[RMDB]
RNA sequence: GGGAACGACUCGAGUAGAGUCGAAAAAUACUGUGCCAAGUUUAGCAGUAGCCUGUACCAUGGAUCCCAUCAGGUGACCAGAUUCUUGCCCAAAGCAAAGUUGAGAGAACUGACCAAGUUCUCUUCAGCACUUAGCACCUAACCCAGACAUGCCCCAACUAGUGAGUACUUUCGAGUACUCACUAGUAAAAGAAACAACAACAACAAC
Reactivity to DMS in 0.01 (KOAc 150mM, MgCl2 10mM, bicine 150mM(pH8.5), 24C), signal-to-noise 2, nucleotides 027 to 156: a080u000a070c020u010g000u000g020c070c070a080a150g000u010u000u000a170g030c040a000g020u000a150g010c040c050u020g010u000a100c020c030a060u000g020g010a180u000c010c000c010a140u010c050a070g040g000u000g010a120c040c010a130g000a150u000u010c070u010u010g010c020c020c090a110a060a150g000c050a060a050a130g020u000u000g000a060g010a030g000a030a000c000u000g010a290c240c150a100a080g010u000u010c000u000c000u000u000c040a060g000c010a110c050u000u000a090g000c040a050c040c020u050a050a080c010c010c000a110g000a100c040a070u000g000c000c020c020c040a070
Reactivity to 2A3 in 0.01 (KOAc 150mM, MgCl2 10mM, bicine 150mM(pH8.5), 24C), signal-to-noise 3, nucleotides 027 to 156: a000u110a030c040u030g000u050g060c010c020a140a130g030u050u080u110a020g010c010a000g000u040a040g070c000c000u060g040u090a060c010c040a070u060g070g040a120u060c020c000c020a040u080c040a040g030g000u030g040a040c020c000a000g010a090u080u030c020u040u060g060c010c010c020a090a060a010g010c050a160a020a000g020u030u070g020a000g000a000g010a010a000c000u040g100a230c070c050a050a010g010u000u000c000u000c020u040u010c010a000g010c000a010c010u070u080a020g000c010a010c010c000u020a010a020c000c010c020a030g030a060c050a080u160g050c010c090c110c000a010